The data come from the RNA Mapping Database (RMDB), libraries RFM100 and RFMREP. Structure probing data (DMS and 2A3) for a 177-nucleotide construct. For 2A3, 1,166 sequencing reads were counted. High 2A3 reactivity points to a flexible backbone, as in loops and unpaired stretches.
RNA sequence: GGGAACGACUCGAGUAGAGUCGAAAACAGAGGAAAAGAAAAUAACUAUGAUUCCCUUAGUAACGGCGAGUGAACAGGGAAAAGCCCAAAUUUGUAAUCUGGCACUUUUUACAAGUGUCCGAGUUGUCUAGAGGUAGAAUUUCGAUUCUACCUCUAGAAAAGAAACAACAACAACAAC
Reactivity to DMS in 0.01 (KOAc 150mM, MgCl2 10mM, bicine 150mM(pH8.5), 24C), signal-to-noise 2, nucleotides 027 to 126: c040a050g000a070g010g020a080a050a040a150g000a180a070a100a100u010a070a130c070u000a050u000g000a220u010u000c000c000c000u010u010a120g020u000a090a000c010g030g020c260g020a240g000u000g000a130a150c170a010g000g000g000a010a010a040a100g030c000c000c000a050a060a140u030u040u000g010u000a110a160u010c060u000g020g020c000a000c000u000u000u000u030u010a060c190a010a000g000u000g010u000c010c040g000a010g000u010u000g000u000
Reactivity to 2A3 in 0.01 (KOAc 150mM, MgCl2 10mM, bicine 150mM(pH8.5), 24C), signal-to-noise 3, nucleotides 027 to 126: c050a010g080a040g060g090a110a110a140a020g170a070a170a050a060u240a080a040c030u080a060u140g030a100u020u060c000c010c060u010u000a020g000u010a020a000c000g120g050c100g050a020g040u000g000a010a010c000a020g020g000g030a010a000a000a000g000c010c000c020a020a090a030u160u100u160g080u110a010a050u010c000u020g020g000c000a000c000u040u040u060u060u180a060c120a050a000g000u000g010u010c020c000g000a000g040u070u120g050u080